Structure probing data (2A3 and DMS) for a 207-nucleotide construct. The data come from the RNA Mapping Database (RMDB), library OK3TST. For DMS the reverse transcriptase was MarathonRT. Conditions: 150 mM KOAc, 10 mM MgCl2 and 150 mM bicine (pH 8.5), 24 C. 2A3 adducts were read by reverse transcription with SuperScript II with manganese.
RNA sequence: GGGAACGACUCGAGUAGAGUCGAAAAGAGUCCAUUGUUGCACCAACAUUGUCUUUACCUCUGACCUCGUGCAUUUGGCUAAUACGACCGGUAUAAAACAAAAUACGCCCGUCAAUAGUCUUGCCACUAUCAAUGUGGGCUGAUAUACCAAUAUUACUCCUGGAAAGGAGUUCGCUCCUUUCCAGGAAAAAGAAACAACAACAACAAC
Reactivity to 2A3 in 0.01 (KOAc 150mM, MgCl2 10mM, bicine 150mM(pH8.5), 24C), signal-to-noise 1, nucleotides 027 to 156: g060a010g050u040c050c000a000u010u110g090u050u060g010c010a000c010c030a100a030c010a050u140u060g080u030c030u070u120u060a070c050c020u060c090u100g030a030c000c020u120c070g040u040g010c040a090u070u030u120g040g010c000u040a000a030u020a070c010g010a040c020c050g000g010u030a030u050a070a110a030a040c100a050a090a030a020u120a040c060g000c010c000c000g040u040c030a040a020u010a020g010u000c020u000u200g010c030c010a020c000u060a060u090c020a050a030u040g000u000g010g030g020c000u000g010a000u030a000u030a040c010c000a000a040u200a040u300u300a050c050
Reactivity to DMS in 0.01 (KOAc 150mM, MgCl2 10mM, bicine 150mM(pH8.5), 24C), signal-to-noise 1, nucleotides 027 to 156: g000a280g010u020c020c030a200u000u000g000u020u010g010c020a080c040c070a170a010c010a090u000u000g010u000c060u000u000u010a090c070c020u010c080u010g010a190c020c050u000c030g050u000g040c050a180u010u000u000g050g010c030u000a030a100u000a090c000g020a080c060c030g020g060u020a050u000a010a110a150a240c080a060a050a050a280u000a200c040g000c010c000c040g000u000c020a050a040u000a040g000u000c040u010u000g020c070c020a050c010u000a050u020c060a170a160u000g000u000g020g000g000c000u000g000a140u010a100u000a040c020c040a100a120u000a100u010u000a080c060